[RMDB]
RNA sequence: GGGAACGACUCGAGUAGAGUCGAAAAGAGUGCGUAAUAGCUCACUGGUCUAGUGAUUCCGCGCCGACAAUGUAGCGGGGCUCAAGCGUACCGCCGAAGUCGUGUCAUUGCAGCAUGUAGGGCCAACCCUCUGCAUCGUUUUCGAACGAUGCAGAGGAAAAGAAACAACAACAACAAC
Reactivity to DMS in 0.01 (KOAc 150mM, MgCl2 10mM, bicine 150mM(pH8.5), 24C), signal-to-noise 2, nucleotides 027 to 126: g000a110g000u000g000c040g050u060a110a090u000a180g020c020u010c010a050c040u000g010g000u010c080u000a110g020u020g000a170u000u010c040c020g020c050g030c060c040g030a040c080a040a050u020g030u020a080g010c040g010g000g000g000c020u000c140a130a200g000c130g020u010a130c040c010g030c010c020g000a040a080g010u000c050g010u000g000u000c070a140u000u000g040c110a090g000c030a030u000g020u020a080g030g010g060c020c030a060a200c130
Reactivity to 2A3 in 0.01 (KOAc 150mM, MgCl2 10mM, bicine 150mM(pH8.5), 24C), signal-to-noise 2, nucleotides 027 to 126: g040a010g000u070g020c020g040u140a050a060u020a160g020c000u000c020a000c050u040g040g060u040c050u130a060g020u020g020a070u150u100c030c040g000c010g000c040c020g000a080c030a090a100u190g040u120a050g010c030g010g020g000g000c030u060c090a080a060g020c010g060u050a070c010c020g020c000c010g000a060a010g000u030c010g020u030g050u090c040a070u050u180g020c000a000g020c020a010u060g050u070a090g020g000g000c030c020a000a030c010